[RMDB]
Structure probing data (2A3 and DMS) for a 177-nucleotide construct. Values cover nucleotides 27 to 126. The 2A3 profile rests on 1,669 reads. The reactions ran in a buffer of 150 mM KOAc, 10 mM MgCl2 and 150 mM bicine (pH 8.5), at 24 C. For DMS the reverse transcriptase was MarathonRT.

RNA sequence: GGGAACGACUCGAGUAGAGUCGAAAAUUCAAUUUUAAAUUCUUCUUGCCUGAAAACGCCACCAUUACCGUGGGUAUGAUUACGGAUUAUCAGUGGUACUAUGGUAGCUAUCGUUUAUUACGCUACACCAUUACAACUCCUUCGGGAGUUGUAAUGGAAAAGAAACAACAACAACAAC
Reactivity to 2A3 in 0.01 (KOAc 150mM, MgCl2 10mM, bicine 150mM(pH8.5), 24C), signal-to-noise 2, nucleotides 027 to 126: u040u010c020a010a060u020u030u100u170a170a210a120u070u010c000u070u000c010u020u080g020c020c030u050g060a100a000a030a030c060g000c000c020a010c000c000a010u020u070a060c010c000g040u010g050g030g030u130a100u200g100a050u050u170a040c050g030g020a020u030u040a020u080c040a010g000u020g070g010u050a030c050u070a020u060g010g000u000a000g000c000u010a020u100c020g020u060u150u010a130u090u040a050c030g010c030u040a030c000a000
Reactivity to DMS in 0.01 (KOAc 150mM, MgCl2 10mM, bicine 150mM(pH8.5), 24C), signal-to-noise 2, nucleotides 027 to 126: u000u020c120a060a090u010u020u010u000a010a110a190u000u000c030u000u010c050u010u010g010c030c030u000g000a090a040a060a190c140g000c020c020a020c030c070a030u000u010a030c030c010g000u030g020g000g000u000a050u000g020a110u000u010a080c150g020g000a150u000u000a030u000c080a080g020u000g000g020u010a050c210u010a070u000g010g020u000a020g000c020u000a070u000c100g000u000u010u000a030u050u000a060c130g010c070u000a030c060a280